[RMDB]
RNA sequence: GGGAACGACUCGAGUAGAGUCGAAAAGUCCGACGAAGAAGUAGACGAUAUCAAGCGCAAGUCAGACCGUAUGCUACGCAGCUCUUUGCCGGACUGGAAAAAGUUGGUUUAUCGGGAGUGCGUGGAGUUUAUCGAGUCCGUACGAUCGGAGGUGACCACACCACUAUGGGUUCGCCCAUAGUGGUGUAAAAGAAACAACAACAACAAC
Reactivity to DMS in 0.01 (KOAc 150mM, MgCl2 10mM, bicine 150mM(pH8.5), 24C), signal-to-noise 3, nucleotides 027 to 156: g000u000c000c010g040a030c030g000a050a020g030a100a130g020u010a090g010a280c020g000a110u000a300u000c080a110a190g040c040g020c090a060a150g020u010c060a100g020a110c080c080g030u000a030u010g010c020u000a040c060g010c020a300g000c060u000c000u000u010u000g030c010c000g030g010a040c020u010g000g000a040a040a080a060a130g030u010u020g020g010u000u000u010a120u020c060g020g000g000a190g030u010g010c030g010u010g000g000a140g010u000u000u000a110u010c060g020a170g010u000c040c050g000u000a060c090g010a130u020c120g010g010a120g000g010u000g020a090c040c030
Reactivity to 2A3 in 0.01 (KOAc 150mM, MgCl2 10mM, bicine 150mM(pH8.5), 24C), signal-to-noise 5, nucleotides 027 to 156: g020u000c000c000g010a010c010g000a010a030g000a110a020g030u080a040g020a070c060g030a100u060a060u260c080a170a100g030c040g010c140a070a110g120u130c070a080g070a120c050c000g060u120a060u210g010c010u020a010c050g020c090a090g020c000u010c010u000u030u010g010c010c000g010g010a020c000u020g020g030a050a070a010a020a010g020u060u030g000g030u080u120u070a080u100c050g020g010g000a060g020u030g010c030g030u080g030g030a050g030u090u090u040a150u100c050g010a030g040u010c010c010g030u080a070c030g030a030u030c010g020g030a030g030g050u040g010a020c000c020
Chemical mapping of a 207-nucleotide RNA with DMS and 2A3. The RNA was probed in 150 mM KOAc, 10 mM MgCl2 and 150 mM bicine (pH 8.5) at 24 C. DMS adducts were read by reverse transcription with MarathonRT. For 2A3 the reverse transcriptase was SuperScript II with manganese. It was measured as part of the RMDB library OK3TST. The DMS profile rests on 4,703 reads.